[RMDB]
RNA sequence: GGGAACGACUCGAGUAGAGUCGAAAACGGCGCGAAUCGGGCGCUGACGCUGGUCGACAAGACGAUCAAGGACACCGAGGCGAUCGCGCACGCGACGAAGCAGCUCGCCGACGAGGCCCGCUCGGUCAUCGACGACGUGGCGUUCGUUGCGGUCGGCACGAGGUAAACUAUUCGUAGUUUACCUCGUAAAAGAAACAACAACAACAAC
Reactivity to 2A3 in 0.01 (KOAc 150mM, MgCl2 10mM, bicine 150mM(pH8.5), 24C), signal-to-noise 5, nucleotides 027 to 156: c030g020g000c000g010c010g080a100a140u080c030g020g110g050c030g000c040u000g020a030c030g010c030u030g030g010u010c020g030a130c100a210a070g110a090c020g020a030u030c050a070a060g070g010a040c040a020c060c030g030a050g060g080c020g020a030u040c010g010c000g000c040a030c000g010c000g010a010c000g020a030a000g150c040a030g000c010u010c010g000c000c000g000a030c030g010a010g020g020c000c010c020g180c100u180c070g030g020u020c060a300u010c100g010a010c010g020a000c010g050u110g050g000c020g000u000u010c010g000u000u010g000c010g000g020u030c020g030g020c050
Reactivity to DMS in 0.01 (KOAc 150mM, MgCl2 10mM, bicine 150mM(pH8.5), 24C), signal-to-noise 2, nucleotides 027 to 156: c020g010g040c000g020c000g020a130a080u010c030g020g020g020c080g030c040u000g020a080c050g010c120u000g010g030u010c000g010a130c050a160a120g000a200c010g030a010u000c020a040a150g020g000a120c050a150c010c000g000a130g000g030c060g000a050u010c030g030c030g000c040a110c040g000c020g000a020c020g010a050a070g000c030a190g000c050u000c010g020c000c000g000a090c020g000a090g000g050c010c010c060g000c150u010c080g030g060u000c030a130u000c030g000a170c000g020a030c020g030u020g040g000c010g040u010u000c020g020u000u010g020c000g020g010u000c010g000g000c100
Description:
The data come from the RNA Mapping Database (RMDB), library OK3TST. The record gives the reactivity of an RNA of 207 nucleotides to 2A3 and DMS. DMS adducts were read by reverse transcription with MarathonRT. For DMS, 3,902 sequencing reads were counted. Reactivities are given for positions 27 through 156.